Chemical mapping of a 177-nucleotide RNA with DMS and 2A3. Source: RMDB library OK1LIB, as collected in RNAgym. Reactivities are given for positions 27 through 126. The reactions ran in a buffer of 150 mM KOAc, 10 mM MgCl2 and 150 mM bicine (pH 8.5), at 24 C.

[RMDB]
RNA sequence: GGGAACGACUCGAGUAGAGUCGAAAAUGCAUUUACCAUAGCCUGGAGCCGCGUAAGGUGAUGAUAUUUGAGGACCUUGUGCCCCAGGGAUAUUAUGUCAUUCGAGACCGUCCGGUUGCUCAGGAAGGGCUAUAUGAGUCUUCGGACUCAUAUAGCCAAAAGAAACAACAACAACAAC
Reactivity to DMS in 0.01 (KOAc 150mM, MgCl2 10mM, bicine 150mM(pH8.5), 24C), signal-to-noise 1, nucleotides 027 to 126: u020g000c000a080u010u020u050a040c110c090a030u000a080g000c000c000u020g010g000a080g030c130c180g020c060g000u010a000a020g020g020u000g000a090u000g000a110u000a140u040u020u010g000a290g010g030a010c000c000u000u000g000u010g000c000c060c000c000a020g070g060g070a060u000a040u060u030a010u000g010u060c060a000u000u000c120g000a070g020a070c020c010g050u000c040c000g000g000u030u000g000c070u050c080a070g000g030a110a030g000
Reactivity to 2A3 in 0.01 (KOAc 150mM, MgCl2 10mM, bicine 150mM(pH8.5), 24C), signal-to-noise 3, nucleotides 027 to 126: u120g000c010a050u000u020u150a110c050c040a000u050a080g110c000c000u070g020g040a090g050c060c080g020c030g030u060a000a000g030g090u040g110a150u040g060a010u060a180u300u130u160g200a150g020g060a010c000c000u000u020g010u000g020c010c000c070c000a000g020g000g000a010u030a030u170u090a070u110g120u160c010a000u050u040c030g010a010g070a110c010c000g090u100c000c000g050g000u020u040g030c000u000c050a020g050g080a040a090g130